[RMDB]
Background: The record gives the reactivity of an RNA of 177 nucleotides to DMS and 2A3. The 2A3 profile rests on 12,365 reads. The reactions ran in a buffer of 150 mM KOAc, 10 mM MgCl2 and 150 mM bicine (pH 8.5), at 24 C. The data come from the RNA Mapping Database (RMDB), library OK1LIB. The DMS profile rests on 7,517 reads. For DMS the reverse transcriptase was MarathonRT. Values cover nucleotides 27 to 126.
RNA sequence: GGGAACGACUCGAGUAGAGUCGAAAAAUUUUUCUCAGCUGGACUUGGCCUGUGGGUUAUCUGGUCCAGCAUAGCAGGACAUCUUCCAGGCUCACAAGGAGGCUGUGCAUUUUACAGAACAUUUUAACGUCAUUAUUAGUUUCGACUAAUAAUGACGAAAAGAAACAACAACAACAAC
Reactivity to DMS in 0.01 (KOAc 150mM, MgCl2 10mM, bicine 150mM(pH8.5), 24C), signal-to-noise 3, nucleotides 027 to 126: a040u010u010u020u010u000c000u000c010a100g030c000u020g000g040a170c010u000u010g000g000c020c000u010g010u020g020g020g020u000u030a070u060c110u020g000g010u000c000c000a040g020c030a010u000a050g010c110a120g000g000a010c070a070u010c030u010u020c090c000a050g000g000c040u020c140a110c120a060a070g000g000a200g000g000c010u000g000u010g000c130a040u010u010u050u020a070c120a030g010a070a120c150a070u010u010u020u000a050a240
Reactivity to 2A3 in 0.01 (KOAc 150mM, MgCl2 10mM, bicine 150mM(pH8.5), 24C), signal-to-noise 8, nucleotides 027 to 126: a000u110u090u010u050u000c020u000c020a020g000c000u030g010g100a030c010u030u080g030g020c000c010u080g040u250g130g030g010u130u100a160u210c080u150g030g010u010c000c010a000g000c000a010u060a020g010c030a020g010g040a030c010a040u010c010u070u000c020c000a030g050g030c050u040c050a120c020a050a050g060g000a030g050g000c000u010g010u030g050c040a060u030u080u080u160a120c110a050g130a160a040c050a140u090u130u060u130a140a060